[RMDB]
RNA sequence: GGGAACGACUCGAGUAGAGUCGAAAAGGAAACUUGUUCGCAAGUUUCCAAAGAACGCUGCAUCGCAAAGCGAGGCCGCGAGAGCGGCCAUACGGGAAGAAAAAACAAAUGGGUUCGCCCAUUUGAACAAUAAGUCCUUCUUCGGAAGGACUUAUUGAAAAGAAACAACAACAACAAC
Reactivity to 2A3 in 0.01 (KOAc 150mM, MgCl2 10mM, bicine 150mM(pH8.5), 24C), signal-to-noise 1, nucleotides 027 to 126: g000g000a000a000a000c000u020u010g040u070u060c100g000c100a000a000g020u000u000u000c000c000a000a060a000g030a090a020c030g020c060u040g000c020a180u140c050g040c150a120a050a060g050c040g020a140g020g070c060c000g010c020g030a060g030a000g140c040g020g080c040c000a000u010a000c030g070g050g050a080a000g050a080a110a040a000a010a020c000a000a000a000u010g000g020g020u000u050c160g120c000c000c010a000u000u020u000g000a030a000
Reactivity to DMS in 0.01 (KOAc 150mM, MgCl2 10mM, bicine 150mM(pH8.5), 24C), signal-to-noise 3, nucleotides 027 to 126: g020g000a020a000a010c010u010u000g010u010u010c210g040c020a000a020g000u000u000u000c000c010a020a050a100g010a100a120c050g020c030u010g020c060a100u010c070g010c040a080a100a090g010c030g010a120g030g010c010c010g030c000g000a120g010a300g020c010g000g010c010c010a020u010a000c100g010g010g010a060a130g030a020a100a070a120a130a150c010a000a000a000u000g000g000g000u000u010c270g000c000c000c000a020u000u010u000g010a070a130

This 177-nucleotide RNA was probed chemically with 2A3 and DMS. It was measured as part of the RMDB library M2PK50. The reactions ran in a buffer of 150 mM KOAc, 10 mM MgCl2 and 150 mM bicine (pH 8.5), at 24 C.